[RMDB]
RNA sequence: GGGAACGACUCGAGUAGAGUCGAAAAGGAGUGUGAGGAGUGAGGUCGGGAUGUACCUCGUGUCCUUGGGGCAUCCUGUCCUAGCAGCUGGUGGUUGGAGUGGAAGCUCAAGCAAGGAGGGGUCAGCUGUCUUACGGGGGUUCGCCCCCGUAAGACAAAAAGAAACAACAACAACAAC
Reactivity to DMS in 0.01 (KOAc 150mM, MgCl2 10mM, bicine 150mM(pH8.5), 24C), signal-to-noise 1, nucleotides 027 to 126: g040g010a070g050u000g000u000g000a070g030g000a120g020u010g040a030g000g030u000c010g010g080g000a090u000g030u010a080c000c000u000c080g000u010g040u000c080c090u010u010g000g000g000g000c010a040u000c000c020u020g010u000c020c010u000a120g020c080a060g010c050u000g000g010u000g000g000u010u020g000g020a080g020u000g000g010a110a220g000c050u010c130a050a090g040c070a080a140g010g010a090g000g010g010g010u010c040a050g010c090
This 177-nucleotide RNA was probed chemically with DMS. The data come from the RNA Mapping Database (RMDB), library OK2TRN. DMS adducts were read by reverse transcription with MarathonRT.